[RMDB]
RNA sequence: GGGAACGACUCGAGUAGAGUCGAAAAACACACACACAGACUCGCUGGGGGUUGCGAGGAAUAAUGUGUGUGUGUGUGUGUGUGUUAUUGGACUCAAAGCUACCCCCUGCGCUGGUCUUUUACACAAGGGUAAUCUAAUCUUCGGAUUAGAUUACCCAAAAGAAACAACAACAACAAC
Reactivity to DMS in 0.01 (KOAc 150mM, MgCl2 10mM, bicine 150mM(pH8.5), 24C), signal-to-noise 2, nucleotides 027 to 126: a000c000a010c010a020c030a000c010a030c000a050g020a100c000u010c010g010c000u000g010g000g010g020g010u000u000g000c020g000a050g010g020a080a070u080a010a100u040g010u010g000u000g020u000g030u000g010u010g000u000g000u010g060u000g020u000g000u000u020a080u010u010g000g000a060c050u000c210a070a080a080g040c170u010a100c050c010c010c010c000u000g010c090g020c300u030g010g000u010c010u000u020u010u000a020c040a030c090a050a220
Reactivity to 2A3 in 0.01 (KOAc 150mM, MgCl2 10mM, bicine 150mM(pH8.5), 24C), signal-to-noise 3, nucleotides 027 to 126: a000c030a000c000a000c000a000c000a000c000a000g110a160c030u030c000g000c040u050g000g010g020g020g000u040u180g000c020g010a020g050g130a050a130u300a070a000u030g040u000g000u000g000u000g000u000g000u000g000u000g070u020g010u010g010u000g060u010u090a130u040u100g010g030a030c000u010c220a190a050a000g000c010u010a060c000c010c010c040c010u060g060c050g000c050u120g050g010u010c000u030u100u020u090a080c070a010c010a070a100
The record gives the reactivity of an RNA of 177 nucleotides to DMS and 2A3. For DMS, 3,272 sequencing reads were counted. Reactivities are given for positions 27 through 126. The data come from the RNA Mapping Database (RMDB), library OK1LIB.